[RMDB]
RNA sequence: GGGAACGACUCGAGUAGAGUCGAAAAUGUUGCGGUUCAGUUUCCUUACUUAUUUGCCGUCCGUAUUUAUAUAUAAAUUCUGCUCUCCGGGCGGUCCUUUUAGCCGCCGAAGUGAGCAUUGAAAAUCAUUCAAUGAUGGUUUCGACCAUCAUUGAAUAAAAGAAACAACAACAACAAC
Reactivity to 2A3 in 0.01 (KOAc 150mM, MgCl2 10mM, bicine 150mM(pH8.5), 24C), signal-to-noise 4, nucleotides 027 to 126: u210g000u040u080g020c000g030g010u030u050c050a030g000u030u030u050c000c000u090u040a090c010u090u170a130u130u180u250g050c010c000g010u010c010c010g090u090a130u040u160u000a130u060a030u010a000u030a080a180a180u130u000c030u050g010c000u020c010u020c000c010g050g000g000c020g000g030u100c020c000u190u210u050u220a030g010c000c000g000c000c000g050a090a030g030u040g000a010g040c010a000u000u040g050a010a000a010a090u080c050
Reactivity to DMS in 0.01 (KOAc 150mM, MgCl2 10mM, bicine 150mM(pH8.5), 24C), signal-to-noise 3, nucleotides 027 to 126: u030g000u020u010g020c300g020g000u000u010c090a100g000u000u000u000c030c050u010u000a110c090u010u010a110u000u020u010g010c010c030g020u000c020c000g030u020a050u010u020u000a090u030a080u020a120u030a120a100a120u020u010c040u000g000c010u020c000u010c030c150g020g040g000c000g000g000u020c100c060u010u040u020u120a170g000c010c000g010c000c000g010a070a140g010u000g030a010g000c010a020u000u020g000a020a060a060a070u020c110

Structure probing data (2A3 and DMS) for a 177-nucleotide construct. The 2A3 profile rests on 1,585 reads. Reactivities are rounded to 0.1 and cut off at 0 and 3. It was measured as part of the RMDB libraries RFM100 and RFMREP. Reactivities are given for positions 27 through 126. DMS adducts were read by reverse transcription with MarathonRT. The reactions ran in a buffer of 150 mM KOAc, 10 mM MgCl2 and 150 mM bicine (pH 8.5), at 24 C.